[RMDB]
RNA sequence: GGGAACGACUCGAGUAGAGUCGAAAAAGCGGAGGUCGGUACGCCGACCUCCGCAAGAGUGAAAUGAUGCUUACCAUCUUUCGGGACUGACCUGAUAUGGAGAUACAUUACUUUACUGAUCACUCAAUUCAUAGAAUCUCUUCGGAGAUUCUAUGAAAAAAGAAACAACAACAACAAC
Reactivity to DMS in 0.01 (KOAc 150mM, MgCl2 10mM, bicine 150mM(pH8.5), 24C), signal-to-noise 3, nucleotides 027 to 126: a070g010c010g080g050a020g030g060u000c020g090g010u020a130c290g020c030c010g070a070c040c030u000c010c000g040c000a000a010g010a040g000u000g010a040a050a080u020g000a020u010g000c270u040u030a130c000c010a020u000c150u000u010u000c010g000g000g000a300c190u010g000a240c000c000u000g000a010u000a030u000g000g010a090g000a080u020a180c020a020u020u010a030c080u000u000u010a060c040u000g020a190u020c060a070c010u000c060a100a160
Reactivity to 2A3 in 0.01 (KOAc 150mM, MgCl2 10mM, bicine 150mM(pH8.5), 24C), signal-to-noise 5, nucleotides 027 to 126: a000g050c010g000g010a000g000g020u010c020g030g020u090a060c300g050c060c000g000a000c000c000u000c000c000g000c010a000a000g010a000g010u020g000a010a050a050u120g030a010u050g030c080u090u130a070c000c000a020u040c140u070u050u030c010g000g000g060a140c110u160g200a300c060c000u010g000a000u020a020u040g030g030a070g020a030u120a060c010a010u050u020a040c040u130u140u080a130c110u200g080a120u060c030a020c010u010c000a040a160

Conditions: 150 mM KOAc, 10 mM MgCl2 and 150 mM bicine (pH 8.5), 24 C. Chemical mapping of a 177-nucleotide RNA with DMS and 2A3. It was measured as part of the RMDB libraries RFM100 and RFMREP. For 2A3, 2,526 sequencing reads were counted.